[RMDB]
This 177-nucleotide RNA was probed chemically with DMS and 2A3.
It was measured as part of the RMDB library OK2TST.
For DMS, 2,497 sequencing reads were counted.
The RNA was probed in 150 mM KOAc, 10 mM MgCl2 and 150 mM bicine (pH 8.5) at 24 C.
The 2A3 profile rests on 936 reads.
RNA sequence: GGGAACGACUCGAGUAGAGUCGAAAAUCAAGAUGUUCUUAUUCGUUAUAAGCGUAUGUCAGGGUUUGAGGUAUGUUGGGUUCCAGGUACCGAUCAUGCCGGUAUCGCUACUCAGACAGUCGUGGAACCACCCUAAAGGGUUCGCCCUUUAGGGUGGAAAAGAAACAACAACAACAAC
Reactivity to DMS in 0.01 (KOAc 150mM, MgCl2 10mM, bicine 150mM(pH8.5), 24C), signal-to-noise 3, nucleotides 027 to 126: u010c070a090a070g010a050u000g000u010u000c010u000u020a070u010u000c260g030u000u000a080u000a050a080g010c300g010u000a030u020g020u000c040a060g020g030g010u010u000u010g010a090g000g030u000a030u020g000u020u000g000g020g020u000u010c050c090a090g010g000u000a030c010c000g010a050u000c110a090u000g040c100c000g000g020u000a020u000c030g030c020u000a000c010u000c000a080g020a090c200a020g020u000c010g000u000g000g010a150a210
Reactivity to 2A3 in 0.01 (KOAc 150mM, MgCl2 10mM, bicine 150mM(pH8.5), 24C), signal-to-noise 1, nucleotides 027 to 126: u030c010a040a000g000a060u050g030u110u030c030u070u100a060u140u130c120g120u140u090a070u010a140a040g000c020g040u060a010u110g050u040c050a100g020g150g000u020u050u070g060a040g030g000u050a000u070g130u030u040g100g000g030u040u020c030c010a030g170g010u060a000c010c020g030a060u070c060a020u120g010c010c000g040g000u100a040u040c030g000c050u000a030c000u000c000a000g010a090c030a060g040u000c000g010u030g020g050a110a000